The record gives the reactivity of an RNA of 177 nucleotides to DMS. For DMS the reverse transcriptase was MarathonRT. The reactions ran in a buffer of 150 mM KOAc, 10 mM MgCl2 and 150 mM bicine (pH 8.5), at 24 C. It was measured as part of the RMDB library TTRDES.
[RMDB]
RNA sequence: GGGAACGACUCGAGUAGAGUCGAAAAAAGAUAUGGAAUCCGUAACGAGCUUGGAUUUACCAGGCCGAGUAGUCGGAAACGACUAUAGUGCCUGGUUGUCAGCUCGGAGAAGGAUUCCUAAGUCAAAUCCUUUGAUAGACUUCGGUCUAUCAAAGGAAAAAGAAACAACAACAACAAC
Reactivity to DMS in 0.01 (KOAc 150mM, MgCl2 10mM, bicine 150mM(pH8.5), 24C), signal-to-noise 1, nucleotides 027 to 126: a080a120g000a020u000a300u010g040g000a010a000u000c010c000g000u000a110a300c010g000a010g030c010u020u000g000g000a050u000u010u000a000c000c000a010g030g000c000c000g000a200g050u030a000g010u000c030g020g020a160a090a280c050g010a020c020u000a000u000a070g000u020g050c000c000u000g020g010u000u000g000u000c030a070g000c010u000c000g000g000a080g000a100a260g000g000a040u010u010c000c000u010a040a090g000u030c030a140a090a090